[RMDB]
RNA sequence: GGGAACGACUCGAGUAGAGUCGAAAAAGGAUCGGUUUAUCCAUUGAGGAGACCGCGCUGGGGAUCGUCGACAUUGCCAAUGAACUCAUGGCCAAGGCAAUCCGGGAGAUCUCGGUGAAUCGUGGCCGAUUGGACACUACUUCGGUAGUGUCCAAUCAAAAGAAACAACAACAACAAC
Reactivity to 2A3 in 0.01 (KOAc 150mM, MgCl2 10mM, bicine 150mM(pH8.5), 24C), signal-to-noise 2, nucleotides 027 to 126: a010g140g010a100u100c040g000g000u060u070u120a090u070c030c020a040u080u300g160a150g080g030a030g000a010c000c020g010c020g040c030u050g020g040g000g030a050u020c020g030u030c010g050a000c030a080u030u060g040c030c010a090a110u150g040a090a050c000u010c100a120u200g000g000c010c010a030a050g020g020c000a010a010u000c010c000g030g000g010a200g030a100u110c010u000c020g040g000u030g010a040a030u090c040g050u060g020g000c040c030
Reactivity to DMS in 0.01 (KOAc 150mM, MgCl2 10mM, bicine 150mM(pH8.5), 24C), signal-to-noise 3, nucleotides 027 to 126: a050g000g010a070u010c030g010g020u000u010u010a100u010c000c020a250u000u020g000a160g030g000a070g010a040c040c030g030c110g000c040u010g030g010g010g000a040u010c040g000u010c020g020a100c120a060u010u010g020c020c020a070a140u030g010a090a130c040u000c120a110u020g020g010c020c030a050a130g010g000c020a050a100u000c030c020g000g000g010a250g010a060u010c000u000c010g000g030u000g010a200a070u000c030g000u010g000g000c030c020
Source: RMDB library OK2TRN, as collected in RNAgym. The record gives the reactivity of an RNA of 177 nucleotides to 2A3 and DMS. 2A3 adducts were read by reverse transcription with SuperScript II with manganese. Conditions: 150 mM KOAc, 10 mM MgCl2 and 150 mM bicine (pH 8.5), 24 C.